RNA sequence: GGGAACGACUCGAGUAGAGUCGAAAAAGAUCCAGGGAAGUCCCGCGAGGGACAAGGAGAGUACCCUUGGCAACUGCACAGAAAACUUACCCCUAAAUAUUCGAUGAGGAUUCGAUACAUCCAUUACAAAUAAAAUAAAAUUCGUUUUAUUUUAUUUAAAAGAAACAACAACAACAAC
Reactivity to 2A3 in 0.01 (KOAc 150mM, MgCl2 10mM, bicine 150mM(pH8.5), 24C), signal-to-noise 1, nucleotides 027 to 126: a000g060a040u010c010c000a010g040g030g010a130a040g010u000c000c000c000g000c040g020a070g000g000g010a020c000a000a000g060g020a070g010a020g020u100a070c010c000c000u040u050g020g000c020a070a080c070u070g020c080a050c030a080g170a030a120a010a010c040u070u080a110c010c000c000c010u050a080a130a060u150a130u090u110c020g010a010u090g040a040g100g050a080u110u080c030g030a020u020a140c020a020u010c050c000a060u130u100a040c030
Reactivity to DMS in 0.01 (KOAc 150mM, MgCl2 10mM, bicine 150mM(pH8.5), 24C), signal-to-noise 3, nucleotides 027 to 126: a130g000a080u030c020c000a130g010g030g010a180a080g010u000c010c000c000g000c300g020a230g010g020g000a030c020a050a110g000g010a170g040a120g030u000a110c030c000c000u000u010g020g010c070a100a030c080u000g040c030a030c030a060g020a100a020a060a050c040u000u000a100c060c000c000c030u000a070a050a060u030a030u000u020c030g020a050u020g010a170g000g030a050u020u000c000g010a090u010a060c160a120u020c020c050a090u050u030a040c040